An RNA of 177 nucleotides, treated with 2A3 and DMS and read out base by base. It was measured as part of the RMDB library OK2TST. The RNA was probed in 150 mM KOAc, 10 mM MgCl2 and 150 mM bicine (pH 8.5) at 24 C. The DMS profile rests on 1,969 reads.
[RMDB]
RNA sequence: GGGAACGACUCGAGUAGAGUCGAAAAAUCGAUGGCAACGCCGCGCAGUUCAUCCAGGUCUGGCCGGUCGACGUCCACCAGUUGCCGCAGUGGAUUCGCCAGCGCCUGUCCCAGGCUGGCCUGUCCAGCCUCAGUGCUGGUUCGCCAGCACUGAGGCAAAAGAAACAACAACAACAAC
Reactivity to 2A3 in 0.01 (KOAc 150mM, MgCl2 10mM, bicine 150mM(pH8.5), 24C), signal-to-noise 1, nucleotides 027 to 126: a000u050c030g020a080u140g020g000c030a080a020c020g000c010c000g000c030g030c010a020g020u090u090c010a090u050c040c080a060g040g050u020c010u030g080g100c040c000g010g000u060c020g030a070c020g020u030c000c010a030c010c020a060g000u070u070g010c040c020g020c030a030g120u130g020g000a020u030u020c010g010c010c000a010g000c070g130c000c030u050g000u060c000c040c010a000g030g000c010u000g000g000c020c000u040g010u090c000c000a010
Reactivity to DMS in 0.01 (KOAc 150mM, MgCl2 10mM, bicine 150mM(pH8.5), 24C), signal-to-noise 2, nucleotides 027 to 126: a060u020c070g000a140u000g000g000c020a060a090c070g000c040c040g020c160g000c040a070g010u000u000c050a070u000c110c130a110g010g010u010c030u010g000g020c020c020g000g010u000c020g030a040c170g000u010c010c010a070c080c040a100g010u000u000g000c040c050g020c250a080g020u000g000g010a020u000u000c130g010c010c010a030g000c070g020c030c020u010g000u010c010c010c010a250g000g000c010u000g000g000c010c060u010g000u000c010c000a070